[RMDB]
RNA sequence: GGGAACGACUCGAGUAGAGUCGAAAAGCUGAUGGAAGGCUCGGCCGACCCGCAUGAGGUGCUGCGGGUGCAGGGCCCCCGCGAGGUGCAGAUACACCUGGUUCGCGAGGUCCAGGAGGUCUACCGCGAGGAGCAAAGUAUUCGUACUUUGCUCCUCAAAAGAAACAACAACAACAAC
Reactivity to DMS in 0.01 (KOAc 150mM, MgCl2 10mM, bicine 150mM(pH8.5), 24C), signal-to-noise 4, nucleotides 027 to 126: g020c030u010g010a160u010g000g010a150a160g010g010c030u000c050g000g000c010c080g010a080c020c000c020g040c040a020u000g000a120g010g010u000g000c180u010g010c010g000g020g000u010g000c050a070g000g020g000c040c010c020c010c050g000c080g010a090g010g000u010g020c080a060g020a110u010a140c060a030c000c020u000g010g000u000u010c020g010c160g000a120g020g010u000c020c010a020g010g000a130g010g000u000c020u010a170c020c030g000c170
Reactivity to 2A3 in 0.01 (KOAc 150mM, MgCl2 10mM, bicine 150mM(pH8.5), 24C), signal-to-noise 3, nucleotides 027 to 126: g030c040u040g020a100u140g080g050a110a050g030g000c000u020c040g050g000c000c030g090a030c000c010c020g000c030a030u120g080a060g210g200u150g080c030u020g000c020g010g020g000u010g020c020a030g030g000g010c000c000c000c000c000g040c010g010a040g030g030u070g030c080a000g040a140u100a110c010a010c020c010u030g040g050u110u100c020g000c060g040a030g000g000u030c000c000a010g000g030a020g000g000u010c000u040a060c020c040g040c070
The record gives the reactivity of an RNA of 177 nucleotides to DMS and 2A3. The RNA was probed in 150 mM KOAc, 10 mM MgCl2 and 150 mM bicine (pH 8.5) at 24 C.